[RMDB]
RNA sequence: GGGAACGACUCGAGUAGAGUCGAAAAGCCAGCUGGGCGGCGAUGGCGUCCAUCAGCUUGUCGCCGAUGCGGGUGUCGAAGGCCUGGUCGAUCUCGCGGAUGCAGGUCGGGCUGGUGACGUUGAUUAGUAAAUUAUUUAUUUCGAUAAAUAAUUUACAAAAGAAACAACAACAACAAC
Reactivity to 2A3 in 0.01 (KOAc 150mM, MgCl2 10mM, bicine 150mM(pH8.5), 24C), signal-to-noise 3, nucleotides 027 to 126: g030c000c010a020g020c030u110g070g070g070c010g000g000c020g070a060u080g030g000c010g030u090c090c010a080u080c020a010g050c010u080u150g050u050c010g000c020c010g010a020u040g010c020g000g020g000u150g020u040c020g030a050a030g070g000c010c040u070g000g080u020c020g020a030u010c010u010c030g030c030g070g060a050u150g050c050a020g050g080u090c000g020g020g000c000u020g000g040u030g010a040c030g010u050u080g020a090u090u120a030
Reactivity to DMS in 0.01 (KOAc 150mM, MgCl2 10mM, bicine 150mM(pH8.5), 24C), signal-to-noise 6, nucleotides 027 to 126: g010c010c010a070g010c030u000g010g010g020c040g010g010c030g000a050u010g000g000c020g010u010c080c070a060u010c070a100g010c030u000u010g030u000c050g010c010c010g010a220u010g010c030g010g000g000u010g020u000c030g010a080a100g010g010c030c030u000g000g000u000c010g000a030u000c010u000c110g020c030g010g010a170u000g000c070a060g000g010u010c020g010g000g010c010u000g000g010u010g000a050c060g010u000u000g000a110u000u000a240
An RNA of 177 nucleotides, treated with 2A3 and DMS and read out base by base. For DMS, 13,210 sequencing reads were counted. It was measured as part of the RMDB library OK2TST. Reactivities are given for positions 27 through 126. DMS adducts were read by reverse transcription with MarathonRT.